Chemical mapping of a 177-nucleotide RNA with 2A3 and DMS. It was measured as part of the RMDB libraries RFM100 and RFMREP. For 2A3 the reverse transcriptase was SuperScript II with manganese.

RNA sequence: GGGAACGACUCGAGUAGAGUCGAAAACGUCUCGCAUCCCCUUAACUGGCUGUUUAACCUGAUAAAGUUCCCUGCGCAGUUCCUGUACUUCGUUGUUAUCCCAAGCAGGAUCAAACAUCCCUCCGAGCGUAUACCCUAAUUUCGAUUAGGGUAUACGAAAAGAAACAACAACAACAAC
Reactivity to 2A3 in 0.01 (KOAc 150mM, MgCl2 10mM, bicine 150mM(pH8.5), 24C), signal-to-noise 7, nucleotides 027 to 126: c020g040u010c010u000c030g030c020a070u060c010c000c010c000u060u070a080a060c030u050g040g030c000u040g080u080u070u090a080a060c010c000u070g060a150u120a140a110a020g030u040u020c000c000c000u020g020c030g000c020a020g010u020u020c010c000u040g020u050a070c030u040u040c040g020u020u050g060u110u080a050u050c010c000c000a010a010g030c020a030g020g030a030u060c070a030a070a010c040a040u040c010c000c000u030c010c010g030a030g050
Reactivity to DMS in 0.01 (KOAc 150mM, MgCl2 10mM, bicine 150mM(pH8.5), 24C), signal-to-noise 9, nucleotides 027 to 126: c120g010u010c030u000c030g010c090a110u000c020c010c010c060u000u010a070a090c080u000g010g010c020u010g010u010u000u010a090a100c060c020u000g000a080u020a050a090a130g000u000u000c020c010c010u000g010c070g000c050a080g000u000u000c010c010u000g010u010a070c080u010u000c090g010u000u000g010u000u010a110u000c010c010c010a070a120g010c070a050g010g010a040u010c070a070a080a090c110a100u000c020c010c020u000c040c040g010a120g010